[RMDB]
RNA sequence: GGGAACGACUCGAGUAGAGUCGAAAAGAUAUGGAUGUGUCUCGUAUGUCGGCUCGUGGUCGGAAACGACCACAGAGCUGAUGCGAGCACAUCCUAAGUCAAACUGGCAUUCUUCGGAAUGCCAGAAUCUUGUAGUCAAGUUCGCUUGACUACAAGAAAAAGAAACAACAACAACAAC
Reactivity to DMS in 0.01 (KOAc 150mM, MgCl2 10mM, bicine 150mM(pH8.5), 24C), signal-to-noise 5, nucleotides 027 to 126: g010a050u000a280u010g010g010a010u000g020u000g000u020c000u000c000g040u000a030u010g040u010c020g020g000c000u000c000g020u000g000g010u010c000g010g000a070a070a190c000g010a010c000c000a010c010a030g020a010g030c000u000g020a010u010g010c010g010a020g010c000a000c000a010u000c000c000u000a010a070g000u000c020a120a150a300c010u000g000g000c000a010u000u000c000u000u010c260g010g000a010a000u000g010c000c000a010g000a030a060
Reactivity to 2A3 in 0.01 (KOAc 150mM, MgCl2 10mM, bicine 150mM(pH8.5), 24C), signal-to-noise 5, nucleotides 027 to 126: g030a020u050a020u140g010g010a000u010g020u000g150u160c010u000c030g000u070a130u300g300u260c020g010g000c000u020c010g000u000g000g000u000c000g000g020a050a050a030c020g000a000c010c000a000c040a010g000a000g000c000u020g000a000u020g000c000g010a000g000c000a000c000a010u000c000c000u000a020a000g010u000c040a040a080a150c010u000g010g000c010a020u010u010c010u040u060c240g200g000a000a000u010g020c010c000a000g000a000a010

Overview
The data come from the RNA Mapping Database (RMDB), library TTRDES. An RNA of 177 nucleotides, treated with DMS and 2A3 and read out base by base. Conditions: 150 mM KOAc, 10 mM MgCl2 and 150 mM bicine (pH 8.5), 24 C. DMS adducts were read by reverse transcription with MarathonRT. For 2A3, 18,059 sequencing reads were counted. Reactivities are given for positions 27 through 126.